[RMDB]
RNA sequence: GGGAACGACUCGAGUAGAGUCGAAAAGAUAUGGACUGUCUACUGGAGCUAAUGUCGGAAACGACAUACUAGCGUUGAAAGUAGCAGUCCUAAGUCAAACGUGAGACUACUUCGGUAGUCUCACGAAGACUAAUCAACGGUUCGCCGUUGAUUAGUCAAAAGAAACAACAACAACAAC
Reactivity to DMS in 0.01 (KOAc 150mM, MgCl2 10mM, bicine 150mM(pH8.5), 24C), signal-to-noise 4, nucleotides 027 to 126: g010a020u010a230u010g000g010a000c000u000g010u030c010u000a010c000u010g010g020a140g010c000u000a050a040u000g020u000c010g030g010a070a060a140c020g010a010c000a010u000a060c300u000a010g020c000g020u010u010g010a150a300a020g010u010a000g010c000a010g010u000c000c000u000a000a070g000u000c030a060a150a300c010g020u000g000a010g000a010c000u000a000c010u000u000c230g020g010u000a000g000u000c000u010c000a000c000g010a050a080
Reactivity to 2A3 in 0.01 (KOAc 150mM, MgCl2 10mM, bicine 150mM(pH8.5), 24C), signal-to-noise 4, nucleotides 027 to 126: g010a010u040a020u060g010g000a000c000u020g090u300c010u040a010c010u060g160g160a060g000c000u020a020a010u000g010u000c000g030g000a040a030a020c020g010a010c020a010u050a110c050u020a010g000c020g120u220u200g200a170a050a000g010u030a000g000c000a000g010u010c000c000u000a010a000g000u000c040a100a060a090c020g000u000g000a010g000a000c010u010a010c020u070u110c300g070g000u010a000g000u000c000u000c000a000c000g000a000a010